This 177-nucleotide RNA was probed chemically with 2A3 and DMS. 2A3 is a SHAPE reagent: it acylates the 2'-hydroxyl of flexible nucleotides of all four kinds. Values cover nucleotides 27 to 126. The DMS profile rests on 8,099 reads. The 2A3 profile rests on 10,468 reads.
RNA sequence: GGGAACGACUCGAGUAGAGUCGAAAAUCAUGUCCUCCCCACGGGGUCUGAGCAUGUCCUCUCCACGGGGUCUGAGCAAGUCCUCCCCAUGGGGUCUGAGCAUGUCCUCCCCACGGGGUCUGAGCAACGCUAAAAGACUAUUCGUAGUCUUUUAGCGAAAAGAAACAACAACAACAAC
Reactivity to 2A3 in 0.01 (KOAc 150mM, MgCl2 10mM, bicine 150mM(pH8.5), 24C), signal-to-noise 3, nucleotides 027 to 126: u090c020a030u110g060u040c000c000u030c000c010c010c000a030c060g000g010g000g060u090c130u060g050a050g030c010a010u020g040u080c000c020u000c010u010c010c010a000c010g010g000g010g060u010c080u090g040a060g010c080a200a060g120u060c000c010u010c000c000c000c000a000u010g000g000g000g060u010c050u030g020a040g000c000a010u010g030u040c010c000u020c000c000c000c000a020c040g010g000g010g020u000c020u040g010a030g040c030a060a100
Reactivity to DMS in 0.01 (KOAc 150mM, MgCl2 10mM, bicine 150mM(pH8.5), 24C), signal-to-noise 6, nucleotides 027 to 126: u010c150a110u010g010u010c010c030u000c010c010c000c010a290c240g020g000g010g000u000c130u000g010a120g010c010a030u000g010u000c030c020u000c010u000c010c030a030c080g000g000g000g000u000c100u010g010a090g020c160a140a120g000u010c040c130u000c000c000c000c000a040u000g010g000g000g000u000c120u000g010a110g000c040a020u000g010u000c030c030u000c010c010c000c000a250c190g010g000g010g020u000c050u000g000a130g020c150a090a180